[RMDB]
RNA sequence: GGGAACGACUCGAGUAGAGUCGAAAAAUCCUCCUCGUCGCGCUCAAAGUUGCUGUGGAACUCGUACUGGAUGUCAAUGCUGUCCACAUCGCUACCAUUUUCCAUGAUGGGCUGCUCGUCGGUGGAGCCGAACUAAUCGCUUCGGCGAUUAGUUCGGAAAAGAAACAACAACAACAAC
Reactivity to 2A3 in 0.01 (KOAc 150mM, MgCl2 10mM, bicine 150mM(pH8.5), 24C), signal-to-noise 2, nucleotides 027 to 126: a000u000c000c000u000c000c030u010c000g020u010c000g040c010g000c000u050c070a180a210a010g040u150u210g030c020u030g040u020g020g070a100a050c020u040c140g020u090a010c050u010g110g230a220u130g210u300c060a070a090u100g030c020u080g070u070c010c010a040c000a020u040c010g020c010u090a120c000c000a050u090u000u020u120c000c040a060u210g000a030u050g000g000g050c010u020g030c000u000c040g050u020c040g060g060u060g040g000a020g000
Reactivity to DMS in 0.01 (KOAc 150mM, MgCl2 10mM, bicine 150mM(pH8.5), 24C), signal-to-noise 1, nucleotides 027 to 126: a090u020c050c000u000c010c000u000c030g030u000c050g020c090g000c020u000c120a060a060a140g020u010u020g000c020u030g000u020g020g030a060a060c060u000c270g030u000a030c080u020g040g000a130u000g000u020c070a030a090u010g030c090u030g020u020c020c000a050c020a040u000c020g000c010u000a120c050c000a080u020u000u020u020c120c090a070u000g000a080u000g000g000g020c040u010g030c000u000c060g050u010c030g030g000u010g000g000a090g000
This 177-nucleotide RNA was probed chemically with 2A3 and DMS. Values cover nucleotides 27 to 126. For 2A3 the reverse transcriptase was SuperScript II with manganese. It was measured as part of the RMDB library OK2TRN. DMS adducts were read by reverse transcription with MarathonRT.